[RMDB]
Conditions: 150 mM KOAc, 10 mM MgCl2 and 150 mM bicine (pH 8.5), 24 C. Chemical mapping of a 207-nucleotide RNA with 2A3 and DMS. The data come from the RNA Mapping Database (RMDB), library M2RFOK.
RNA sequence: GGGAACGACUCGAGUAGAGUCGAAAAACUGACGGUACGCCGUCAGAACGGUAGAAAAGAUGGUUUGAAAACCACGCCUUCUACCAAUAUAGUAAAUAAAUAGGCGGAGCGGUCAUACGUCACCGCAAAAACAUCCUUGGCUUCGGCCAAGGAUGAACAAAGAGAAGCUGUUCGCAGCUUCUCUUUGAAAAGAAACAACAACAACAAC
Reactivity to 2A3 in 0.01 (KOAc 150mM, MgCl2 10mM, bicine 150mM(pH8.5), 24C), signal-to-noise 2, nucleotides 027 to 156: a020c000u000g000a010c000g010g000u050a020c200g020c030c000g000u000c000a000g010a030a000c030g010g000u010a000g000a000a020a020a020g060a260u030g000g070u040u040u160g110a140a170a000a000c000c000a000c000g010c000c000u030u000c000u000a000c000c010a000a000u080a000u020a010g090u060a010a070a160u080a070a040a020u140a030g040g020c050g020g000a010g030c000g000g030u090c060a120u110a270c100g020u080c150a000c050c000g000c000a070a000a000a030a000c000a000u000c000c000u000u000g000g000c010u020u040c130g060g000c000c000a000a000g000g000a000u000g000a000a000
Reactivity to DMS in 0.01 (KOAc 150mM, MgCl2 10mM, bicine 150mM(pH8.5), 24C), signal-to-noise 1, nucleotides 027 to 156: a180c020u010g010a030c000g000g060u020a060c230g000c030c000g040u000c010a030g010a010a080c170g000g020u000a000g010a030a000a000a000g000a040u010g000g000u000u000u060g010a210a080a160a040c020c000a000c010g000c000c010u000u000c000u000a010c000c000a100a110u000a050u010a110g000u000a090a140a110u000a080a060a240u000a120g020g010c040g070g000a300g020c010g030g000u000c060a170u030a050c100g000u000c000a180c010c000g050c020a040a050a060a100a060c010a010u000c010c000u000u000g030g000c000u000u000c300g070g010c000c000a000a000g020g010a000u000g000a040a150